[RMDB]
RNA sequence: GGGAACGACUCGAGUAGAGUCGAAAAACGGUGCGGAAGUUCGCGCUUCCGUGUAACGCGAAAAUCGGACGGUGGCUGCAAGUCGCAUCGCAAAACCGCGGCAAGUGGAGUUAGCGAGAGGAGGCUGAAACCAUCCAACACUUCGGUGUUGGAUGAAGAAGUAAAGAUUGUUCGCAAUCUUUACUUCAAAAGAAACAACAACAACAAC
Reactivity to DMS in 0.01 (KOAc 150mM, MgCl2 10mM, bicine 150mM(pH8.5), 24C), signal-to-noise 2, nucleotides 027 to 156: a060c020g030g000u000g000c000g020g000a070a120g010u010u010c240g000c240g010c010u000u000c010c030g010u000g000u010a030a050c020g010c010g010a070a040a080a120u000c050g050g000a040c020g020g020u000g020g000c000u000g040c050a060a080g030u010c010g020c030a190u010c030g000c030a030a060a090a130c030c040g000c080g000g010c040a050a040g020u000g010g000a130g000u000u020a080g010c050g020a110g000a090g010g000a080g040g020c020u000g020a170a070a150c110c000a020u010c000c000a000a010c000a040c010u000u000c280g040g010u010g000u000u000g000g000a000u000g030a020a060
Reactivity to 2A3 in 0.01 (KOAc 150mM, MgCl2 10mM, bicine 150mM(pH8.5), 24C), signal-to-noise 3, nucleotides 027 to 156: a000c020g000g000u050g020c010g020g000a030a020g030u090u120c070g020c030g000c050u020u010c000c020g000u020g030u030a100a050c040g000c010g110a070a020a000a130u110c020g020g010a010c020g000g030u030g030g030c050u060g000c090a050a010g040u020c010g000c030a040u050c020g000c020a040a030a010a030c030c020g000c010g060g020c080a090a050g010u040g050g020a060g040u080u110a020g030c020g030a010g010a020g090g020a020g020g000c010u020g020a040a000a020c020c000a000u000c000c000a000a000c000a000c000u040u060c210g090g000u000g000u000u000g010g000a010u000g000a000a020
Structure probing data (DMS and 2A3) for a 207-nucleotide construct. 2A3 adducts were read by reverse transcription with SuperScript II with manganese. The 2A3 profile rests on 3,274 reads. For DMS the reverse transcriptase was MarathonRT. For DMS, 3,554 sequencing reads were counted. The reactions ran in a buffer of 150 mM KOAc, 10 mM MgCl2 and 150 mM bicine (pH 8.5), at 24 C.